[RMDB]
RNA sequence: GGGAACGACUCGAGUAGAGUCGAAAAGCGACGGCAAGCUGUAUACGCAAUGCGAAACUGAGGCUCAGAUAGAGGCGUAUAUCCUCGACAUGCACCGAAGCAGCGACUCAUUGACGCUCAGGAAAGGCUCCUUGUGCCAAUUCGUUGGCACAAGGAGAAAAGAAACAACAACAACAAC
Reactivity to 2A3 in 0.01 (KOAc 150mM, MgCl2 10mM, bicine 150mM(pH8.5), 24C), signal-to-noise 1, nucleotides 027 to 126: g000c000g030a060c010g040g030c050a000a090g030c030u050g090u020a060u000a050c030g020c040a060a180u190g040c050g060a090a020a020c040u060g070a020g150g000c030u030c140a000g050a110u100a070g060a020g030g020c010g050u050a080u010a020u100c020c010u020c020g000a010c000a050u090g000c000a000c030c000g000a020a000g000c020a020g020c030g020a010c010u000c040a100u030u110g070a030c070g000c000u020c060a000g000g190a130a090a040g110g000
Reactivity to DMS in 0.01 (KOAc 150mM, MgCl2 10mM, bicine 150mM(pH8.5), 24C), signal-to-noise 2, nucleotides 027 to 126: g030c050g020a260c080g010g010c030a060a080g000c010u000g000u020a070u000a010c060g010c050a140a110u020g030c040g020a070a070a060c070u000g000a040g000g030c100u000c010a040g000a110u010a100g000a060g010g030c010g000u000a050u000a080u000c030c080u000c090g000a080c150a020u000g020c030a050c020c000g000a070a140g010c070a050g010c030g030a030c040u000c060a110u000u040g020a130c170g000c020u000c010a050g000g010a050a060a090g000g000
This 177-nucleotide RNA was probed chemically with 2A3 and DMS. The DMS profile rests on 1,026 reads. As a SHAPE reagent, 2A3 marks flexible, mostly unpaired nucleotides at the ribose 2'-OH. For 2A3, 1,194 sequencing reads were counted. For DMS the reverse transcriptase was MarathonRT.